This 177-nucleotide RNA was probed chemically with DMS and 2A3. For DMS the reverse transcriptase was MarathonRT. Values cover nucleotides 27 to 126. The reactions ran in a buffer of 150 mM KOAc, 10 mM MgCl2 and 150 mM bicine (pH 8.5), at 24 C.

RNA sequence: GGGAACGACUCGAGUAGAGUCGAAAAGGUUCUGCAGUUCUUAGGCAGUGGUUACCAGCGGGCAGUAUUCUUGUAGAUAAUGAUGUGAAUCCAUUUGUGAGUGACAGCGUUGCCUCAUAUUACGGAAGAAGAGAAGUGAGUUCGCUCACUUCUCUUCAAAAGAAACAACAACAACAAC
Reactivity to DMS in 0.01 (KOAc 150mM, MgCl2 10mM, bicine 150mM(pH8.5), 24C), signal-to-noise 4, nucleotides 027 to 126: g010g030u000u000c030u000g030c060a110g010u010u000c070u000u010a100g010g010c040a040g010u010g010g010u000u000a090c090c050a070g020c080g010g000g020c050a050g010u000a030u010u010c040u000u000g000u010a100g010a070u010a040a070u000g000a050u010g010u010g000a100a110u000c040c040a060u000u000u010g020u000g000a060g000u010g020a050c060a060g010c120g000u000u000g000c020c020u000c070a030u010a070u010u010a070c130g010g000a080a140
Reactivity to 2A3 in 0.01 (KOAc 150mM, MgCl2 10mM, bicine 150mM(pH8.5), 24C), signal-to-noise 2, nucleotides 027 to 126: g030g000u070u070c030u060g010c000a060g010u100u000c030u080u170a040g000g070c030a030g000u040g090g050u100u020a090c040c010a010g000c080g010g020g000c010a010g040u040a060u090u020c050u110u130g070u050a040g010a070u080a120a080u110g070a030u080g050u000g110a060a020u040c040c020a060u050u000u170g080u010g040a060g000u100g040a020c000a000g090c100g120u080u050g030c000c000u000c000a020u110a020u050u120a030c040g000g010a060a060